[RMDB]
RNA sequence: GGGAACGACUCGAGUAGAGUCGAAAAGAAAGAAACAUCACCCUAUGGAAAAGAAAGGCAGCCACAAACGAAACCUGAGGAAACAGGAAGCCACAACGUGCGCCAUGUGGUUAGCAAAGGGAGAAAACGUGAUGCAUAUCUUCGGAUAUGCAUCACGAAAAGAAACAACAACAACAAC
Reactivity to DMS in 0.01 (KOAc 150mM, MgCl2 10mM, bicine 150mM(pH8.5), 24C), signal-to-noise 2, nucleotides 027 to 126: g000a040a090a000g000a240a010a100c030a100u000c180a100c000c030c000u010a110u000g000g040a130a010a110a030g010a120a040a160g000g010c030a060g000c020c000a020c140a060a080a120c210g000a120a170a100c050c000u000g000a300g080g010a130a090a200c000a020g020g000a010a200g000c000c000a040c040a080a110c300g000u000g000c140g000c130c110a140u000g070u090g020g050u000u000a110g000c020a020a080a070g030g030g000a090g000a030a090a070a030
Reactivity to 2A3 in 0.01 (KOAc 150mM, MgCl2 10mM, bicine 150mM(pH8.5), 24C), signal-to-noise 1, nucleotides 027 to 126: g130a000a000a000g080a000a030a070c060a040u050c030a070c010c000c000u080a160u070g150g060a080a210a060a050g140a050a060a160g070g080c000a000g020c010c000a000c000a000a020a060c030g000a000a000a050c000c000u000g030a040g090g040a060a000a000c000a000g000g000a020a000g000c040c000a030c000a220a040c150g020u010g000c010g000c000c000a000u060g000u040g000g000u000u000a050g000c020a210a070a040g050g070g050a100g040a020a130a000a000